[RMDB]
RNA sequence: GGGAACGACUCGAGUAGAGUCGAAAACGCAUGCGAGAGCAUGCGGCUAAGCUUCGGCUUAGUAAGAGCAACUUCGGAUUUCAGGCUCCCCGGCGUGUCUCGAACCAUGCCGGGCCAAACCCAUAGGGCUGGCGGUCCCUGUGCGGUCAAAAUUCCAGAUCGAUACCAUAUUCGUAUGGUAUCGAUCAAAAGAAACAACAACAACAAC
Reactivity to 2A3 in 0.01 (KOAc 150mM, MgCl2 10mM, bicine 150mM(pH8.5), 24C), signal-to-noise 3, nucleotides 027 to 156: c000g010c010a000u000g000c000g010a040g000a010g050c010a000u000g010c000g000g000c000u000a000a000g010c000u030u160c300g110g000c000u000u000a000g000u020a040a010g020a000g000c040a060a130c070u180u130c110g070g020a060u010u070u170c070a060g090g000c010u020c000c000c000c000g000g000c000g010u010g010u020c060u060c250g090a030a020c030c000a000u010g000c000c000g000g000g000c000c010a000a010a000c000c000c000a010u010a010g010g000g020c020u030g090g070c100g060g060u120c020c000c000u010g000u020g010c180g010g000u050c040a020a030a010a130u110u030c010c000a020